[RMDB]
Overview: Structure probing data (2A3) for a 207-nucleotide construct.
RNA sequence: GGGAACGACUCGAGUAGAGUCGAAAAACGAGUCGUACGCGACUCGAAUGGUAUUGUCGGCGUAAAAGAACAAGUCGUCACCGGACGCGACCGGGCUAAAAAGCGAAACGUCAUCUACGGAUGACGAAAAACGGACCUGGGUUCGCCCAGGUCCGAAGAUAGUCGGUCUGUUCGCAGACCGACUAUCAAAAGAAACAACAACAACAAC
Reactivity to 2A3 in 0.01 (KOAc 150mM, MgCl2 10mM, bicine 150mM(pH8.5), 24C), signal-to-noise 2, nucleotides 027 to 156: a020c000g000a000g000u000c000g020u030a050c230g000c000g110a000c000u000c000g000a020a110u130g110g030u110a160u100u170g060u050c000g000g020c010g100u170a070a080a000a030g090a110a100c050a090a040g060u020c010g000u000c020a020c020c000g020g000a020c000g010c000g000a000c020c000g010g000g030c070u060a020a020a020a020a020g010c000g050a100a030a010c010g000u000c000a000u000c000u000a050c190g100g020a000u000g000a000c010g040a050a000a000a000a000c000g010g000a000c000c000u010g060g020g000u030u060c130g060c020c000c000a000g000g000u000c000c000g000a000a000
Values cover nucleotides 27 to 156. It was measured as part of the RMDB library M2RFPK.